[RMDB]
RNA sequence: GGGAACGACUCGAGUAGAGUCGAAAAGCAAUGCUUCGGCAUUGCACGGUUGCUACGGCAACCGAAGCGUAACGUACGCGUUACGCAGUGUGAUGCGUGAGCAUCACACAGAUAAGCUUCGGCUUAUCAAUGUAUCUGAAGUCUGACGAGGAUGAGAACCUCCGGGGGCAAGAGGUUCGACUCGAGCGAAGCGAGAGAACGUUGCGUCAGCAACGGCCCGCAGGGCGAGCCACGCAGUGGCGAGUCAUCCUCUAUCACCGACCAACACGACUGCGUUCGCGCAGUCGAAAAGAAACAACAACAACAAC
Reactivity to DMS in 0.01 (KOAc 150mM, MgCl2 10mM, bicine 150mM(pH8.5), 24C), signal-to-noise 3, nucleotides 027 to 266: g000c000a000a000u000g000c010u010u040c220g020g010c000a000u000u000g010c040a080c040g000g000u000u000g020c000u000a100c240g060g020c000a000a030c000c000g030a070a100g000c020g000u000a000a000c010g030u020a090c150g030c020g020u000u000a000c010g010c010a060g010u000g000u020g000a010u000g000c010g040u000g010a200g010c000a010u010c000a000c010a010c000a050g000a010u000a010a010g020c010u010u000c240g040g020c000u000u000a000u000c000a220a070u010g010u000a050u010c040u010g020a220a180g020u000c050u000g000a100c300g010a040g020g000a020u000g000a150g000a090a080c010c000u000c030c040g010g000g000g010g020c090a120a090g000a020g010g000u010u010c020g010a060c020u000c010g000a180g020c080g020a300a250g020c000g010a090g010a250g010a050a090c000g000u000u000g010c000g020u040c300a110g000c020a040a000c000g000g010c040c020c000g000c040a060g000g000g000c000g020a230g010c010c030a040c010g000c140a170g020u010g000g010c000g010a090g010u000c020a130u010c010c000u000c030u000a270u000c070a110c130c080g000a100c040c100a120a090c210a120
Reactivity to 2A3 in 0.01 (KOAc 150mM, MgCl2 10mM, bicine 150mM(pH8.5), 24C), signal-to-noise 4, nucleotides 027 to 266: g000c010a000a000u010g000c010u080u130c300g090g000c000a000u010u000g000c000a000c010g000g000u000u000g000c010u020a070c200g130g000c010a000a000c000c000g010a070a030g000c000g000u000a010a000c010g010u040a020c230g020c000g140u010u000a000c000g000c080a080g010u010g010u010g000a000u000g010c010g030u110g040a040g000c000a000u000c010a000c000a000c000a000g000a000u010a000a000g000c010u030u150c300g110g000c000u030u000a000u000c040a010a090u180g090u140a120u060c090u120g100a110a020g070u020c020u040g040a020c040g000a010g030g000a040u080g060a040g000a080a020c000c010u000c070c090g070g000g040g000g000c010a030a020g010a000g000g000u030u020c060g020a050c010u010c030g060a060g030c050g050a120a010g000c030g030a120g000a040g020a300a050c020g000u010u010g020c040g190u300c170a020g020c000a000a010c000g020g020c010c010c010g060c020a040g040g160g010c040g030a020g000c010c000a030c030g300c090a070g030u020g010g000c000g010a000g010u010c000a010u010c000c020u000c010u030a080u100c020a040c110c070g060a020c030c050a060a030c090a010